[RMDB]
The record gives the reactivity of an RNA of 177 nucleotides to DMS.
DMS (dimethyl sulfate) methylates the pairing face of unpaired adenines and cytosines.
Source: RMDB library OK2TST, as collected in RNAgym.
For DMS the reverse transcriptase was MarathonRT.
RNA sequence: GGGAACGACUCGAGUAGAGUCGAAAACUAGCCACGGGGUUGUUGCACAGCUCGGAGGCUGGGACCCACGCGCGCGCGCUCCCGCGGUGCAGAGUCGGGGUCCUGGCUCACAGCCCUCGCAGCAUUCCUUUCUGACGAGAUUCGUCUCGUCAGAAAGAAAAGAAACAACAACAACAAC
Reactivity to DMS in 0.01 (KOAc 150mM, MgCl2 10mM, bicine 150mM(pH8.5), 24C), signal-to-noise 2, nucleotides 027 to 126: c080u000a090g000c040c050a160c190g030g030g020g010u000u010g000u010u000g020c040a120c290a170g020c050u010c090g050g040a170g000g020c000u010g000g000g010a030c010c000c000a060c050g030c060g000c050g000c020g030c010g010c030u010c160c250c210g030c030g000g020u000g030c020a110g010a080g020u010c050g010g000g020g000u000c000c000u000g000g000c010u030c060a150c230a030g010c000c010c050u000c160g010c030a090g020c030a080u000u000c020